Background: The record gives the reactivity of an RNA of 177 nucleotides to DMS and 2A3. For 2A3 the reverse transcriptase was SuperScript II with manganese. Values cover nucleotides 27 to 126. The data come from the RNA Mapping Database (RMDB), library OK1LIB. The RNA was probed in 150 mM KOAc, 10 mM MgCl2 and 150 mM bicine (pH 8.5) at 24 C.

RNA sequence: GGGAACGACUCGAGUAGAGUCGAAAAUUUCAGAUACUCUAGCACAACAAUUAAUCAUUGGGAUCUAGGUGGUAUUAUGUGUGUGUGACGGUUGUGUCUGAGCGAGUAUCUCAAGCAUCUAGGACAGACCGCUGCAUUAGUUCGCUAAUGCAGCGGUAAAAGAAACAACAACAACAAC
Reactivity to DMS in 0.01 (KOAc 150mM, MgCl2 10mM, bicine 150mM(pH8.5), 24C), signal-to-noise 1, nucleotides 027 to 126: u000u000u000c080a010g010a100u010a040c010u000c020u000a130g080c000a000c020a030a000c000a140a180u000u120a150a000u020c030a110u000u020g000g000g000a020u000c050u000a010g000g020u000g000g020u020a220u050u050a000u000g040u020g000u000g010u000g000u020g000a040c080g090g000u000u000g000u040g000u000c030u040g000a090g000c190g000a010g010u000a000u000c080u000c160a070a110g000c020a070u000c090u000a140g010g040a020c010a060g050
Reactivity to 2A3 in 0.01 (KOAc 150mM, MgCl2 10mM, bicine 150mM(pH8.5), 24C), signal-to-noise 1, nucleotides 027 to 126: u030u000u000c030a040g020a010u000a000c000u000c000u000a010g050c000a020c000a140a070c000a000a120u210u130a020a020u000c000a000u160u170g290g060g000a060u010c020u090a150g080g000u000g010g040u020a020u110u080a190u230g200u000g000u000g020u020g050u030g060a050c190g060g000u090u090g000u030g080u030c020u060g000a000g030c000g020a060g000u070a090u000c030u000c000a070a070g090c000a210u140c000u140a000g000g120a000c030a000g010